[RMDB]
RNA sequence: GGGAACGACUCGAGUAGAGUCGAAAACAGUUUUAAUGACAAGCUAUACACGUAUUUUUUAAAAUGCUAUGGCUGUUAAGUAUGAUGCUGGAUAUAAGUUAUGUAACCAAGUUGUCAUGGUCUAUAUUGUUAGCACGUUUGGAUGCUUUUCACAGUAGUAUACAGUGUACUUCGGUACACUGUAUACAAAAGAAACAACAACAACAAC
Reactivity to DMS in 0.01 (KOAc 150mM, MgCl2 10mM, bicine 150mM(pH8.5), 24C), signal-to-noise 4, nucleotides 027 to 156: c030a130g010u010u020u000u010a060a130u000g020a070c030a070a090g020c030u000a080u000a060c090a070c060g030u000a000u000u000u010u000u020u020a060a110a110a050u010g000c090u000a030u010g020g020c000u000g000u000u000a040a130g020u000a060u000g000a090u000g020c010u010g010g000a100u010a060u000a020a090g010u010u000a050u000g010u010a060a140c050c040a070a280g020u000u010g010u000c020a100u000g010g000u000c030u010a090u000a070u000u000g010u000u000a040g040c020a040c070g020u000u000u000g040g000a150u000g010c020u000u000u000u000c040a050c040a080g010u000a120
Reactivity to 2A3 in 0.01 (KOAc 150mM, MgCl2 10mM, bicine 150mM(pH8.5), 24C), signal-to-noise 3, nucleotides 027 to 156: c010a000g020u040u070u070u180a190a090u130g020a010c030a000a090g000c040u050a020u030a060c090a010c110g050u080a150u040u070u020u020u040u150a100a190a000a000u060g000c040u030a010u040g020g000c010u020g030u060u050a060a030g030u010a060u150g060a030u090g020c010u000g050g000a020u040a030u030a110a100g060u220u060a080u150g060u030a030a010c020c030a090a050g050u070u040g060u100c050a080u050g060g000u000c060u020a070u020a070u110u080g040u080u040a020g010c000a000c070g060u060u070u130g120g030a090u030g010c000u050u030u070u080c060a060c020a050g140u150a010